[RMDB]
RNA sequence: GGGAACGACUCGAGUAGAGUCGAAAAUAAGGCCCCUAAGUGCCGGCUAAGUGUAAACGAUAAAGGAGGUCCCGGGUCGAAGACAGCGGGGAGGUAGGCUUAGAAGCAGCCACCCUUUAAAGAGUGCCGCUUAAGUGACUUUCGAGUCACUUAAGCGAAAAGAAACAACAACAACAAC
Reactivity to DMS in 0.01 (KOAc 150mM, MgCl2 10mM, bicine 150mM(pH8.5), 24C), signal-to-noise 2, nucleotides 027 to 126: u020a040a080g030g000c040c040c020c040u010a070a050g000u000g000c150c030g020g000c030u000a200a110g000u000g000u000a020a050a090c160g000a120u020a090a120a060g000g040a100g010g020u000c070c000c020g020g020g030u010c040g000a080a060g000a110c150a070g010c040g020g010g000g000a030g000g100u000a070g000g020c000u000u110a070g020a150a240g020c070a150g000c000c000a140c000c000c030u020u010u010a050a120a140g000a040g060u000g040c020
Reactivity to 2A3 in 0.01 (KOAc 150mM, MgCl2 10mM, bicine 150mM(pH8.5), 24C), signal-to-noise 1, nucleotides 027 to 126: u130a000a000g050g000c000c000c040c000u000a120a140g010u100g020c010c030g000g040c000u100a050a080g080u060g010u070a140a210a000c020g010a010u070a120a130a000g020g000a060g070g000u060c000c010c020g000g000g030u030c010g010a050a010g000a000c080a010g010c010g040g000g010g110a020g090g000u010a100g000g000c040u000u070a070g000a150a000g160c080a000g000c000c000a050c010c000c000u000u050u140a100a110a020g100a000g030u090g000c000